[RMDB]
RNA sequence: GGGAACGACUCGAGUAGAGUCGAAAAGUGAAGAUUCGUCUUCACAUCUUGGGGUCUGCUAUCCUCUAAACUUUGAUCGUACUGAAGCCUCCACGGUACGGGAGUCUAGAGGCCGAGGCAGACGGAGGCACCCGCUCAUUAUACUUUCGAGUAUAAACGCGCUAUAAUGUUUCGACAUUAUAGCGCGAAAAGAAACAACAACAACAAC
Reactivity to 2A3 in 0.01 (KOAc 150mM, MgCl2 10mM, bicine 150mM(pH8.5), 24C), signal-to-noise 2, nucleotides 027 to 156: g000u000g010a000a010g010a020u120u100c220g090u010c120u000u030c010a010c010a050u070c020u120u200g070g010g010g000u020c020u010g000c020u060a010u060c010c000u040c050u080a100a110a050c060u260u190u090g070a080u200c000g000u010a010c010u010g030a140a050g070c020c010u000c030c000a020c000g000g000u000a000c020g000g010g000a030g010u020c060u030a030g000a010g030g000c060c040g220a240g080g000c000a000g010a020c000g020g020a000g000g020c010a030c000c010c010g060c050u060c030a120u060u080a030u020a040c000u100u130u270c300g080a010g080u110a010u120a140a080a070